[RMDB]
RNA sequence: GGGAACGACUCGAGUAGAGUCGAAAAUCAUGCUAUCACCUGCUAACUGGUUGUCGUCCAGUUAGAUCUGAGCGAGAGUUCAGGAGGUGUCUUUGACGACAACGAAGACGCUAAGGUGAUAGCAUGCCUAGUAGUUUCAAUUCGUUGAAACUACUAGAAAAGAAACAACAACAACAAC
Reactivity to 2A3 in 0.01 (KOAc 150mM, MgCl2 10mM, bicine 150mM(pH8.5), 24C), signal-to-noise 7, nucleotides 027 to 126: u090c000a000u000g000c000u000a000u000c000a000c000c000u010g010c000u010a010a010c000u010g020g060u050u100g180u130c060g060u010c000c010a000g000u010u010a010g000a010u020c000u000g000a000g000c010g010a060g000a010g060u010u000c010a010g010g040a070g020g030u030g010u000c000u000u020u030g040a060c110g020a030c020a040a010c020g020a010a000g000a000c010g000c010u030a030a000g000g000u000g000a000u000a000g000c000a000u000g000c000
Reactivity to DMS in 0.01 (KOAc 150mM, MgCl2 10mM, bicine 150mM(pH8.5), 24C), signal-to-noise 9, nucleotides 027 to 126: u020c010a000u000g000c000u000a000u000c000a010c000c000u000g010c000u000a020a050c010u000g000g010u000u010g020u010c210g010u000c000c070a020g010u000u000a010g010a050u000c000u000g000a010g010c000g000a240g000a220g010u000u000c000a010g010g010a090g010g010u000g010u000c000u000u000u000g000a110c130g010a120c300a080a120c020g000a010a010g000a040c030g020c000u000a080a010g010g010u000g000a010u000a000g010c000a000u000g000c240